[RMDB]
RNA sequence: GGGAACGACUCGAGUAGAGUCGAAAAGCAAGACAGGUUAACAUUCAAAUUCAGGAAGUACAGAGAACACCACAAAGAUAUUCCUUGAGAAGAGCAACCCCAAGACACAUAAUCAUCAGAUUCACCAAGGUUGAAAUGUAGGAAAAAAUGUUAAGGGACUAGUACCAAGGUUCGCCUUGGUACUAGUAAAAGAAACAACAACAACAAC
Reactivity to 2A3 in 0.01 (KOAc 150mM, MgCl2 10mM, bicine 150mM(pH8.5), 24C), signal-to-noise 4, nucleotides 027 to 156: g040c020a020a040g050a030c000a050g030g040u070u080a020a040c020a050u080u070c060a040a090a110u090u080c030a030g050g010a040a020g020u060a060c040a020g040a010g020a080a020c050a040c040c020a040c040a060a120a000g100a050u100a110u110u070c020c000u060u100g030a030g020a120a010g020a040g030c030a030a050c030c000c000c010a030a010g030a020c040a000c010a060u120a070a050u070c020a000u050c030a050g030a140u040u050c020a010c060c020a080a010g080g000u030u010g030a020a080a050u100g010u050a040g010g000a070a060a010a020a000a020u090g020u050u060a040a040g050g000g040
Reactivity to DMS in 0.01 (KOAc 150mM, MgCl2 10mM, bicine 150mM(pH8.5), 24C), signal-to-noise 3, nucleotides 027 to 156: g010c020a040a130g020a130c070a100g010g050u000u000a060a050c080a130u000u000c060a130a070a120u010u010c030a060g010g000a070a050g020u000a140c040a060g000a130g000a050a060c020a060c010c030a100c080a090a110a140g020a070u010a070u000u000c020c030u000u000g020a090g000a090a100g010a170g010c080a070a180c040c020c020c020a060a150g000a030c040a030c050a090u000a070a060u000c060a040u010c050a110g000a110u000u010c060a070c050c000a080a070g000g020u000u010g010a030a000a060u010g000u000a080g020g010a000a010a030a100a040a070u010g000u010u000a060a100g020g040g020